[RMDB]
RNA sequence: GGGAACGACUCGAGUAGAGUCGAAAACAUCUGGUAACAGAUGCCUCUGGGGCCAAAAGCCAAGGUUUAGCAGACCCUUUAGGAUUGGUUCAAUACCUGAGUUAAUAUGGAAAGUGCUUAGUACCUGCAAUAACUAUGAAUUCGUUCAUAGUUAUUGAAAAGAAACAACAACAACAAC
Reactivity to DMS in 0.01 (KOAc 150mM, MgCl2 10mM, bicine 150mM(pH8.5), 24C), signal-to-noise 9, nucleotides 027 to 126: c020a020u000c010u010g000g000u030a130a170c010a020g000a020u000g010c030c020u000c080u000g010g000g000g020c030c040a060a070a120a150g000c050c050a080a070g010g000u010u000u010a100g010c090a120g000a090c050c020c040u000u000u010a070g010g000a120u010u000g010g010u010u010c090a050a060u010a070c040c020u000g000a070g010u010u010a060a080u020a080u010g000g000a060a060a090g000u000g000c020u000u010a070g010u010a080c050c020u000g010
Reactivity to 2A3 in 0.01 (KOAc 150mM, MgCl2 10mM, bicine 150mM(pH8.5), 24C), signal-to-noise 9, nucleotides 027 to 126: c000a010u000c010u010g010g020u040a100a030c000a010g010a020u030g030c000c000u010c030u050g060g000g010g000c020c010a050a050a030a030g030c020c020a060a050g040g000u040u090u100a040g010c040a010g020a130c010c010c000u040u090u090a070g020g010a060u030u070g050g020u100u090c030a040a030u090a170c010c010u030g010a030g050u090u160a100a080u120a110u160g050g030a100a060a030g060u040g020c010u030u030a020g030u050a070c010c020u020g010